RNA sequence: GGGAACGACUCGAGUAGAGUCGAAAAAGCUCAGGCAUACGUGCCUGAGCAUGGCCAAGGAUGAGAACUCUAAUCUGAUUUUAUGUGCUUCUGCUGUGAUGGAUUAAAGGAUUUACCUGAGGCCAAACUCAUAGAGCGUUUUCGAACGCUCUAUGAGAAAAGAAACAACAACAACAAC
Reactivity to 2A3 in 0.01 (KOAc 150mM, MgCl2 10mM, bicine 150mM(pH8.5), 24C), signal-to-noise 7, nucleotides 027 to 126: a000g000c010u000c010a000g000g030c000a030u030a060c240g140u030g000c000c000u000g000a000g010c000a010u020g000g000c010c000a010a020g000g020a090u110g030a040g040a130a050c010u020c000u030a010a010u000c010u040g270a220u070u050u050u150a110u210g180u050g050c080u040u290c080u180g030c010u040g020u050g080a070u110g020g010a000u000u000a010a010a050g030g030a070u020u000u100a070c000c000u040g020a230g040g000c010c020a010a020a040
Reactivity to DMS in 0.01 (KOAc 150mM, MgCl2 10mM, bicine 150mM(pH8.5), 24C), signal-to-noise 3, nucleotides 027 to 126: a110g000c020u000c010a010g020g030c000a020u020a110c190g020u000g000c000c020u000g010a010g020c000a010u000g000g010c000c000a120a230g000g000a090u000g010a020g000a040a110c020u000c030u010a010a000u000c020u000g000a120u010u010u010u010a050u010g010u030g000c060u010u030c190u020g030c040u000g010u000g000a020u030g000g000a030u000u000a010a030a020g010g000a160u000u000u000a020c000c010u000g000a300g020g000c010c010a060a120a140